[RMDB]
RNA sequence: GGGAACGACUCGAGUAGAGUCGAAAAGAUAUGGAGCGGUACACGAGCAUCGAUCAGGGAUCGGAAACGAUCCCUGGGAGCUCGGUACCCGCUCCUAAGUCAAAAGUUGCGUCUUCGGACGCAACAAGACUAUUAUACAGUUCGCUGUAUAAUAGUCAAAAGAAACAACAACAACAAC
Reactivity to 2A3 in 0.01 (KOAc 150mM, MgCl2 10mM, bicine 150mM(pH8.5), 24C), signal-to-noise 5, nucleotides 027 to 126: g010a000u050a020u140g000g000a010g000c030g020g090u060a050c300a200c140g040a000g010c010a160u300c030g070a070u060c010a010g000g000g020a000u010c010g030g000a020a050a010c020g000a000u020c090c010c000u000g000g000g000a000g000c000u000c010g010g000u010a000c000c000c000g000c010u000c000c000u000a040a000g010u000c030a000a060a080a190g000u000u000g010c000g000u000c000u030u100c300g140g000a000c000g000c000a000a000c000a000a000
Reactivity to DMS in 0.01 (KOAc 150mM, MgCl2 10mM, bicine 150mM(pH8.5), 24C), signal-to-noise 8, nucleotides 027 to 126: g000a040u000a300u010g010g000a020g040c010g010g020u000a010c020a200c080g010a010g030c010a300u010c190g010a060u020c000a010g000g000g010a020u000c000g000g010a040a040a140c000g020a010u000c000c000c000u000g010g000g000a020g040c010u000c010g010g010u000a010c130c050c050g010c000u000c000c000u000a010a070g000u000c030a120a110a130a160g010u000u000g010c000g010u000c000u000u010c230g020g000a010c000g010c000a000a000c000a080a100